The record gives the reactivity of an RNA of 207 nucleotides to 2A3 and DMS.
Reactivities are given for positions 27 through 156.
DMS adducts were read by reverse transcription with MarathonRT.
It was measured as part of the RMDB library M2RFPK.

RNA sequence: GGGAACGACUCGAGUAGAGUCGAAAAUAGCGAAGUAGGAUUUUAUGCGUCAAGUGUUCACAGGCUGGGGAGUCGCCGUGAAACGAAAAGCAGAAAGCGUGCUGCUUACGAUACAAUUUCCGCACCCAUAAGAAGUCUCUGUUCGCAGAGACUUCAAACCUAUAUGAUGCUUCGGCAUCAUAUAGGUAAAAGAAACAACAACAACAAC
Reactivity to 2A3 in 0.01 (KOAc 150mM, MgCl2 10mM, bicine 150mM(pH8.5), 24C), signal-to-noise 4, nucleotides 027 to 156: u140a010g030c030g030a060a010g060u110a080g040g050a030u040u060u050u070a080u170g080c020g010u040c060a080a040g030u060g060u220u040c030a010c080a110g020g000c020u070g050g000g020g030a070g080u090c030g000c010c020g010u020g010a050a000a000c020g000a040a090a020a010g000c020a010g050a080a110a020g130c120g070u110g020c010u010g000c000u020u030a030c020g010a010u030a080c050a050a060u040u020u000c020c000g010c030a050c000c010c000a040u070a090a070g000a000a000g000u000c000u000c000u010g040u040u050c130g000c040a000g000a000g000a000c000u000u000c000a000a000
Reactivity to DMS in 0.01 (KOAc 150mM, MgCl2 10mM, bicine 150mM(pH8.5), 24C), signal-to-noise 2, nucleotides 027 to 156: u010a050g040c040g000a030a120g030u000a090g000g010a120u000u000u000u020a050u010g000c000g030u010c070a080a240g020u000g000u010u000c020a020c060a130g000g000c030u040g020g030g010g010a110g000u000c000g020c030c030g000u000g000a040a040a090c020g030a180a050a010a100g010c010a040g000a050a070a120g000c140g000u000g000c020u000g000c020u000u000a030c050g000a120u000a010c060a020a110u000u010u000c020c030g020c030a300c010c020c010a180u000a100a140g000a010a020g030u000c010u000c000u010g000u010u000c210g040c010a000g010a030g020a010c000u000u000c020a010a030

Notes: DMS (dimethyl sulfate) methylates the pairing face of unpaired adenines and cytosines. The reactions ran in a buffer of 150 mM KOAc, 10 mM MgCl2 and 150 mM bicine (pH 8.5), at 24 C.